[RMDB]
RNA sequence: GGGAACGACUCGAGUAGAGUCGAAAAAAAGAUAUGGACCUAUCUACCCACCUCUACGAACGGUAAUACUUCGCUCGGAAACGAGCGAAGUGCCAGUUCAAGUAGAGAGGAUAGGUCCUAAGUCAAACUAUACAAACAUCUUCGGAUGUUUGUAUAGAAAAGAAACAACAACAACAAC
Reactivity to 2A3 in 0.01 (KOAc 150mM, MgCl2 10mM, bicine 150mM(pH8.5), 24C), signal-to-noise 2, nucleotides 027 to 126: a000a000a050g230a080u230a190u280g000g000a000c000c000u010a010u000c000u130a300c030c040c010a010c020c000u000c000u010a010c000g030a050a010c000g020g030u150a250a080u150a290c000u010u000c020g030c010u020c010g000g050a120a110a110c010g010a000g000c000g000a010a000g000u000g000c010c010a050g000u000u000c050a120a020g000u000a000g000a010g000a010g050g010a000u010a010g010g000u000c010c000u010a020a000g070u040c070a040a010a160
Reactivity to DMS in 0.01 (KOAc 150mM, MgCl2 10mM, bicine 150mM(pH8.5), 24C), signal-to-noise 3, nucleotides 027 to 126: a060a070a120g020a150u000a190u000g000g010a000c000c000u000a000u000c000u000a190c010c030c020a300c160c020u010c010u000a010c010g000a020a030c010g020g010u010a100a100u020a160c010u000u000c010g010c000u000c000g010g010a100a080a140c000g000a030g000c000g010a000a000g040u000g000c010c010a070g030u000u000c040a100a180g030u000a000g010a010g010a070g010g000a010u010a010g000g010u000c010c000u000a010a050g000u010c090a100a110a230